Chemical mapping of a 177-nucleotide RNA with DMS and 2A3. 2A3 adducts were read by reverse transcription with SuperScript II with manganese. The reactions ran in a buffer of 150 mM KOAc, 10 mM MgCl2 and 150 mM bicine (pH 8.5), at 24 C.
RNA sequence: GGGAACGACUCGAGUAGAGUCGAAAAUGUACGACACCGGGCUGUACCUGCGUUUUCGUGCCACCGGACCUGACGAUUUCCACCUCGCGUAUGCCGCUGCGUUGGCUUCGACGGGCGGGCCGGAGGAAUCCACCGUCGAUUUCGAUCGACGGUGGAUAAAAGAAACAACAACAACAAC
Reactivity to DMS in 0.01 (KOAc 150mM, MgCl2 10mM, bicine 150mM(pH8.5), 24C), signal-to-noise 1, nucleotides 027 to 126: u000g010u000a030c060g000a020c300a080c040c040g000g000g000c050u000g010u020a140c060c000u000g010c060g000u000u000u000u000c030g030u000g010c060c080a130c040c000g000g000a070c080c000u010g000a090c080g000a090u000u000u000c070c040a230c010c040u000c070g030c090g000u000a050u030g020c000c000g000c040u020g010c020g000u010u000g000g000c160u000u010c030g000a060c100g010g000g000c020g000g010g000c080c070g030g000a100g000g000a100
Reactivity to 2A3 in 0.01 (KOAc 150mM, MgCl2 10mM, bicine 150mM(pH8.5), 24C), signal-to-noise 1, nucleotides 027 to 126: u110g010u040a060c050g040a010c010a030c050c030g030g000g000c070u040g030u160a050c000c000u040g050c110g050u080u010u010u110c060g010u020g050c070c010a030c010c000g120g050a090c000c030u070g030a000c030g100a120u060u100u000c030c040a060c040c010u050c000g070c010g040u050a070u220g120c010c010g090c080u230g090c010g030u030u080g000g050c050u120u140c020g160a160c020g080g000g000c150g010g050g000c000c020g050g030a000g060g000a010
It was measured as part of the RMDB library OK2TRN.
For DMS, 1,195 sequencing reads were counted.